[RMDB]
RNA sequence: GGGAACGACUCGAGUAGAGUCGAAAAAUGCAUGGUCUUGACCGGCGACUUGGCCUGGCACUGCACCGCCCGGAACGAGGUGAAGUCAUGGGUGCCGACCAGUACCUGGGCCGCCUCGCGCAUCCGAGCUAUAAUUACUGUUCGCAGUAAUUAUAGCAAAAGAAACAACAACAACAAC
Reactivity to DMS in 0.01 (KOAc 150mM, MgCl2 10mM, bicine 150mM(pH8.5), 24C), signal-to-noise 9, nucleotides 027 to 126: a140u000g000c030a050u010g010g010u000c020u000u000g010a100c050c030g020g000c080g010a100c140u010u010g010g010c020c010u010g020g010c040a060c060u000g000c060a070c060c060g010c020c020c010g020g010a070a120c040g000a050g000g020u000g000a100a110g010u000c030a100u000g000g000g010u000g010c010c050g000a100c300c150a080g010u000a020c020c000u000g010g010g010c010c050g000c010c010u000c020g010c100g000c130a100u000c030c020g000a220
Reactivity to 2A3 in 0.01 (KOAc 150mM, MgCl2 10mM, bicine 150mM(pH8.5), 24C), signal-to-noise 5, nucleotides 027 to 126: a000u100g000c040a040u090g020g020u040c020u090u150g060a230c020c020g030g030c050g090a170c100u090u130g080g000c010c020u040g060g000c030a020c070u040g010c030a030c030c030g040c000c020c000g030g030a090a040c020g000a020g000g020u040g070a210a050g020u030c060a300u100g020g000g000u000g000c010c010g080a090c020c000a000g010u010a010c000c010u000g000g000g000c000c000g010c000c000u020c010g030c010g000c020a040u010c020c010g030a040
Notes: Conditions: 150 mM KOAc, 10 mM MgCl2 and 150 mM bicine (pH 8.5), 24 C. This 177-nucleotide RNA was probed chemically with DMS and 2A3. The 2A3 profile rests on 31,190 reads. For DMS the reverse transcriptase was MarathonRT. Values are in units of 0.01, from 0 to 300, in steps of 10. It was measured as part of the RMDB library OK2TST.